RNA sequence: GGGAACGACUCGAGUAGAGUCGAAAAUGGUUCGCCCGUUCCAAGCAAAGAGCUGGGCUGGGUGAGUUGGACGAAGGUCUGGCUUACUCAGCUCCUAAAGCGGUGGGUAACGCGUGAGGCUGGCUUCACAGAGCAGCGACUACCUCCCGUUCUUGGCGUAUUAUUGGGCGUUCGCGCCCAAUAAUACAAAAGAAACAACAACAACAAC
Reactivity to 2A3 in 0.01 (KOAc 150mM, MgCl2 10mM, bicine 150mM(pH8.5), 24C), signal-to-noise 2, nucleotides 027 to 156: u130g050g020u050u020c030g070c010c020c010g040u070u030c000c010a040a020g030c050a120a160a130g080a030g040c150u170g000g010g000c000u010g030g000g000u000g010a020g000u010u040g000g000a000c040g200a230a040g220g010u010c000u000g000g000c000u000u000a000c000u000c000a000g000c010u000c000c000u080a050a040a000g020c010g040g010u070g020g010g030u030a080a060c070g020c050g070u040g010a030g090g000c010u020g010g070c040u220u150c150a110c020a060g030a020g010c050a000g000c000g010a030c040u030a010c010c000u030c030c000c000g020u050u030c010u010u020g020g010c050
Chemical mapping of a 207-nucleotide RNA with 2A3. The reactions ran in a buffer of 150 mM KOAc, 10 mM MgCl2 and 150 mM bicine (pH 8.5), at 24 C.